[RMDB]
Chemical mapping of a 207-nucleotide RNA with DMS and 2A3. Values cover nucleotides 27 to 156. For 2A3 the reverse transcriptase was SuperScript II with manganese. The data come from the RNA Mapping Database (RMDB), library OK3TST. The RNA was probed in 150 mM KOAc, 10 mM MgCl2 and 150 mM bicine (pH 8.5) at 24 C. For 2A3, 668 sequencing reads were counted.
RNA sequence: GGGAACGACUCGAGUAGAGUCGAAAAGCAUUUUGGCGGAGUUCCGGUUCAGAACGAGGAUGGAACUUACAACUACGAAGGUGUGAUUGCUGAGUUCCGCCCCGGCACGCAAACGCAGGAUUAUAUCCAGGGCUUCAGCGAGUCAAGCGCUGAAUUCUAAUGAAGGUGGAUUCGUCCACCUUCAUUAAAAAGAAACAACAACAACAAC
Reactivity to DMS in 0.01 (KOAc 150mM, MgCl2 10mM, bicine 150mM(pH8.5), 24C), signal-to-noise 2, nucleotides 027 to 156: g010c020a100u000u000u010u010g020g040c060g000g010a190g020u020u000c030c010g020g040u000u010c080a110g020a110a100c070g010a090g020g030a160u000g020g030a020a020c030u000u000a040c060a030a030c030u000a020c020g020a110a120g030g050u000g060u000g000a020u000u000g020c040u000g060a060g010u000u000c020c000g000c010c010c000c000g000g000c020a040c080g060c050a090a050a100c090g030c060a100g010g000a120u000u010a080u010a300u000c000c020a130g000g000g010c020u020u010c020a030g060c000g020a160g040u000c090a070a100g020c050g010c010u000g000a040a100u000u020c030
Reactivity to 2A3 in 0.01 (KOAc 150mM, MgCl2 10mM, bicine 150mM(pH8.5), 24C), signal-to-noise 2, nucleotides 027 to 156: g030c000a060u060u050u170u300g030g000c050g010g000a060g060u150u110c070c030g020g030u110u160c090a080g150a270a110c080g010a040g030g030a110u140g000g010a000a000c000u000u000a030c010a030a020c010u070a050c020g190a220a070g220g010u230g020u030g190a220u010u020g070c200u020g040a020g000u010u000c000c010g000c000c030c000c000g000g000c020a030c040g000c070a040a110a000c020g030c020a010g020g100a050u120u090a090u170a040u170c060c030a030g020g060g060c020u080u080c040a000g000c000g000a000g060u090c080a080a030g010c010g010c010u000g040a000a050u030u010c030